[RMDB]
RNA sequence: GGGAACGACUCGAGUAGAGUCGAAAACGCACUCGCAGCUUAAUAACCUGCGCCGAGCCCUUCUCCCCCAGCUUGCCUGUGUCCUAGGGAAUUGGAAGGUCAUCCUUCACAGGAUCGUGUGGAAGUCAUUACUCGUGAGUGUUCGCACUCACGAGAAGACAUAAUAGCUCUUCGGAGCUAUUAUGUCAAAAGAAACAACAACAACAAC
Reactivity to 2A3 in 0.01 (KOAc 150mM, MgCl2 10mM, bicine 150mM(pH8.5), 24C), signal-to-noise 2, nucleotides 027 to 156: c050g000c020a040c020u060c030g000c000a000g000c030u050u030a040a000u020a070a050c020c000u010g000c020g010c030c050g040a050g000c000c010c040u180u030c110u090c020c010c000c000c020a000g020c010u050u070g020c000c010u020g000u000g010u030c000c030u060a030g070g000g090a060a100u080u060g040g010a080a000g030g020u080c040a080u120c010c000u000u060c020a030c010a050g020g000a020u090c050g020u020g000u020g150g010a000a050g030u050c020a070u090u140a110c000u010c000g000u010g010a010g000u010g010u000u010c080g070c050a000c000u000c000a010c000g000a000g010a000a000
Reactivity to DMS in 0.01 (KOAc 150mM, MgCl2 10mM, bicine 150mM(pH8.5), 24C), signal-to-noise 2, nucleotides 027 to 156: c080g030c040a100c020u000c000g040c020a010g040c020u000u000a120a140u000a140a120c250c020u000g010c030g020c050c050g030a090g010c050c000c060u000u000c030u000c040c010c000c020c000a080g030c050u010u000g000c010c040u000g030u000g020u000c040c020u020a120g010g000g000a130a140u000u010g020g010a080a120g020g000u010c090a140u000c000c020u000u000c050a110c020a060g000g000a070u010c090g010u000g000u020g000g020a160a170g010u000c060a090u000u020a250c020u000c000g030u000g000a000g020u000g020u000u010c300g020c020a030c010u000c000a010c010g000a010g010a010a100